[RMDB]
RNA sequence: GGGAACGACUCGAGUAGAGUCGAAAAGAUAUGGACUGACUCAACAGCCCAUGGUCGGAAACGACCAAUGGGACAUGAGUCAGGUCCUAAGUCAAAACACAUCCUCAUGUUCGCAUGAGGAUGUGAACGUCUUCAACUUCUUCGGAAGUUGAAGACGAAAAGAAACAACAACAACAAC
Reactivity to DMS in 0.01 (KOAc 150mM, MgCl2 10mM, bicine 150mM(pH8.5), 24C), signal-to-noise 1, nucleotides 027 to 126: g000a000u000a120u000g000g000a180c000u000g000a000c000u000c000a030a150c300a200g000c000c000c000a000u020g000g000u010c010g020g000a030a010a060c000g010a000c000c020a010a020u000g020g000g000a060c080a110u020g000a000g010u000c000a020g000g000u010c010c010u000a000a060g000u010c000a130a040a190a200c000a000c000a010u000c000c000u010c000a010u000g000u000u040c230g000c000a000u000g000a000g010g000a000u000g000u020g000a050a090
Reactivity to 2A3 in 0.01 (KOAc 150mM, MgCl2 10mM, bicine 150mM(pH8.5), 24C), signal-to-noise 1, nucleotides 027 to 126: g000a010u010a020u100g000g000a000c020u020g000a060c010u020c020a070a210c120a300g120c000c000c000a000u000g000g040u000c010g000g050a060a030a020c000g000a000c000c000a010a160u010g010g000g090a090c060a170u030g010a000g020u020c000a020g000g000u040c010c000u010a010a000g010u020c000a010a060a110a050c010a000c000a000u000c010c000u020c000a020u020g080u000u050c300g010c160a010u010g000a000g000g000a010u000g010u000g000a000a000